[RMDB]
RNA sequence: GGGAACGACUCGAGUAGAGUCGAAAAGCAAUUGAUAAUGAUACGACAAAUAAAAUUCAAGUGAUUGAUGCUAAAGGUCAUCAUGUAUUACCAGGUUUUAUUGAUAUACAUAUUCAUGGUGGUUAUGCCUAUAAGCAAAAUUCGUUUUGCUUAUAGGAAAAGAAACAACAACAACAAC
Reactivity to 2A3 in 0.01 (KOAc 150mM, MgCl2 10mM, bicine 150mM(pH8.5), 24C), signal-to-noise 9, nucleotides 027 to 126: g070c030a030a120u100u060g030a020u050a130a040u030g030a010u020a050c140g040a030c180a040a070a010u080a020a030a020a010u150u200c100a180a030g020u020g050a090u050u040g010a010u030g010c060u190a210a070a060g130g090u150c000a000u000c000a000u100g120u120a060u050u090a030c030c030a020g030g030u010u010u020u020a040u020u060g040a030u020a000u020a110c030a010u070a060u040u080c030a020u050g060g030u030g020g040u130u080a040u170g030
Reactivity to DMS in 0.01 (KOAc 150mM, MgCl2 10mM, bicine 150mM(pH8.5), 24C), signal-to-noise 9, nucleotides 027 to 126: g000c100a070a060u020u010g000a040u000a100a030u010g000a060u000a040c120g000a110c210a070a050a030u010a020a020a020a030u000u030c050a100a120g000u010g000a060u000u010g000a020u000g000c050u020a100a130a130g010g010u040c010a020u000c010a030u020g010u040a030u010u010a040c040c090a270g010g010u000u000u000u000a020u020u010g000a120u020a060u010a050c050a030u010a080u010u000c030a020u010g000g020u000g000g000u000u010a070u030g010
Structure probing data (2A3 and DMS) for a 177-nucleotide construct. Values cover nucleotides 27 to 126. The DMS profile rests on 28,746 reads.